An RNA of 207 nucleotides, treated with 2A3 and read out base by base. Conditions: 150 mM KOAc, 10 mM MgCl2 and 150 mM bicine (pH 8.5), 24 C.

[RMDB]
RNA sequence: GGGAACGACUCGAGUAGAGUCGAAAAGGUUGGGGUGCCAUGCCGAGCCGCCCUACGUAAAGGGCACGAACGGUGCACCACGCAAUAGGUUCACCAUGGUGGCUAACGAUAGCAUGUUCGCGUUGGCUGGAAGAGCAGCGGUGUAGCAUGACGACCCGGCCUAAAUGUUCUUCGGAACAUUUAGGCCAAAAGAAACAACAACAACAAC
Reactivity to 2A3 in 0.01 (KOAc 150mM, MgCl2 10mM, bicine 150mM(pH8.5), 24C), signal-to-noise 1, nucleotides 027 to 156: g070g010u070u040g000g000g000g010u100g040c000c000a040u030g050c020c000g050a040g040c060c040g060c020c000c030u050a090c050g090u140a010a260a000g050g030g000c040a000c090g080a180a020c030g000g000u000g010c060a000c050c020a000c060g300c020a060a300u130a270g000g000u000u080c000a020c000c030a070u130g040g030u060g040g000c010u020a010a010c010g000a030u070a070g000c110a070u140g030u050u060c030g000c000g020u010u030g030g000c010u080g000g010a020a020g020a010g080c020a000g020c020g030g000u040g000u010a010g050c010a010u000g030a140c010g040a060c050c000c000